An RNA of 177 nucleotides, treated with DMS and 2A3 and read out base by base. Reactivities are rounded to 0.1 and cut off at 0 and 3. 2A3 adducts were read by reverse transcription with SuperScript II with manganese.
RNA sequence: GGGAACGACUCGAGUAGAGUCGAAAAAAGUGACUAAAGCAUAUUACCCUUCUUCACAACAGGCAUUAAAGCUGUAUGAUUUGCUACGUGAGCAUCGAAAUAAAGGUACAGCUACCUUGACAUACGAGCUCGUAGUGGUAUUCGUACCACUACGAGCAAAAGAAACAACAACAACAAC
Reactivity to DMS in 0.01 (KOAc 150mM, MgCl2 10mM, bicine 150mM(pH8.5), 24C), signal-to-noise 1, nucleotides 027 to 126: a010a050g020u000g010a060c150u000a040a080a140g000c010a020u000a100u000u050a080c010c020c000u000u000c070u030u000c060a050c090a100a100c060a030g020g010c040a110u000u010a030a070a040g000c000u020g040u000a080u000g010a070u010u010u000g000c000u000a110c170g020u020g020a010g010c070a060u020c000g000a090a110a080u000a030a080a080g000g050u000a050c040a100g000c160u010a020c010c010u000u000g000a100c110a110u000a120c070g000a110
Reactivity to 2A3 in 0.01 (KOAc 150mM, MgCl2 10mM, bicine 150mM(pH8.5), 24C), signal-to-noise 1, nucleotides 027 to 126: a000a000g080u060g030a050c080u080a050a030a050g040c020a020u040a090u130u100a110c000c020c000u090u000c010u050u040c050a010c010a090a070c010a100g100g030c010a030u140u160a230a100a000g000c000u000g030u060a040u110g190a150u030u100u040g000c000u010a030c010g130u050g050a030g010c020a040u040c120g040a100a050a070u170a160a050a000g090g000u030a030c000a030g060c090u040a090c000c000u050u000g000a010c000a090u180a020c000g010a020